Source: RMDB library TTRDEL, as collected in RNAgym. An RNA of 177 nucleotides, treated with 2A3 and DMS and read out base by base. The RNA was probed in 150 mM KOAc, 10 mM MgCl2 and 150 mM bicine (pH 8.5) at 24 C. For 2A3 the reverse transcriptase was SuperScript II with manganese. For 2A3, 3,527 sequencing reads were counted.
RNA sequence: GGGAACGACUCGAGUAGAGUCGAAAAGAUAUGGACUCGAUUGAGACGCCUUACUAUUCGGAAACGAACGAAUAAGGAACUACGUUGUAAGUCGAGUCCUAAGUCAAAAGCACGCUUCGGCGUGCAAGUACUCCUCUUGGUUCGCCAAGAGGAGUACAAAAGAAACAACAACAACAAC
Reactivity to 2A3 in 0.01 (KOAc 150mM, MgCl2 10mM, bicine 150mM(pH8.5), 24C), signal-to-noise 2, nucleotides 027 to 126: g020a000u070a030u120g000g010a000c020u000c010g010a010u030u090g030a080g010a090c000g040c010c000u000u030a040c040u060a020u000u060c010g080g000a090a100a130c020g060a040a010c050g070a300a300u050a020a060g030g020a060a080c090u110a050c300g020u020u030g130u220a030a000g000u000c000g000a010g010u000c000c000u000a000a000g010u000c010a000a010a020a090g030c010a000c000g020c010u050u160c290g130g000c000g010u010g000c000a000a010
Reactivity to DMS in 0.01 (KOAc 150mM, MgCl2 10mM, bicine 150mM(pH8.5), 24C), signal-to-noise 2, nucleotides 027 to 126: g000a030u000a300u000g000g000a000c000u020c000g000a010u000u000g010a280g020a010c000g000c010c100u010u000a030c090u000a300u000u000c000g000g010a110a050a260c060g010a030a020c110g010a120a030u010a010a000g010g010a080a030c060u010a260c050g000u000u000g000u000a300a050g010u000c000g000a020g030u000c010c000u000a000a010g030u040c040a040a090a100a120g010c010a000c010g010c030u000u000c230g010g000c000g060u000g010c020a000a030
The DMS profile rests on 1,440 reads. Values cover nucleotides 27 to 126.